This 207-nucleotide RNA was probed chemically with 2A3 and DMS.
As a SHAPE reagent, 2A3 marks flexible, mostly unpaired nucleotides at the ribose 2'-OH.
Conditions: 150 mM KOAc, 10 mM MgCl2 and 150 mM bicine (pH 8.5), 24 C.
Values cover nucleotides 27 to 156.
RNA sequence: GGGAACGACUCGAGUAGAGUCGAAAAUUUAGCGCUGUUUUAUUGGCGCAAAGGUUUACGGAUAAACAACUAAUAAUUAAACCUUUUGUGUGCGAAACGUGGUUGUUUAACGUACUCUUUAAUCGCUUUGGGGAUGUGUCCUUCGGGACACAUCCAAUCCUAUGUAUGUGUUCGCACAUACAUAGGAAAAAGAAACAACAACAACAAC
Reactivity to 2A3 in 0.01 (KOAc 150mM, MgCl2 10mM, bicine 150mM(pH8.5), 24C), signal-to-noise 2, nucleotides 027 to 156: u060u110u070a060g000c010g000c000u020g140u120u080u070u270a100u060u300g000g000c000g000c000a010a010a010g010g000u000u000u000a010c030g000g090a220u040a070a050a000c040a020a000c010u030a070a060u070a140a070u200u060a080a070a120c010c000u020u090u090u250g110u040g010u020g000c100g010a040a070a050c190g010u050g010g000u020u000g010u000u000u000a010a010c000g000u000a000c020u000c000u060u120u060a180a110u090c100g050c140u110u080u080g040g040g050g000a010u000g000u000g000u000c000c000u010u000c130g070g000g000a000c000a000c000a000u010c010c000a000a000
Reactivity to DMS in 0.01 (KOAc 150mM, MgCl2 10mM, bicine 150mM(pH8.5), 24C), signal-to-noise 1, nucleotides 027 to 156: u000u010u000a110g010c110g010c010u010g020u010u000u010u000a130u020u040g040g010c000g050c060a060a040a050g040g010u010u000u000a010c030g020g000a240u000a040a030a040c010a020a040c030u010a100a090u000a060a090u010u000a100a110a040c010c010u000u000u000u000g020u000g050u000g090c070g000a110a060a070c150g000u000g000g040u000u000g020u010u000u000a030a050c000g020u000a030c040u000c010u010u000u000a070a130u000c020g020c040u010u010u020g020g030g040g020a010u000g000u000g010u000c000c000u000u010c270g040g040g030a020c010a000c020a000u000c000c000a020a050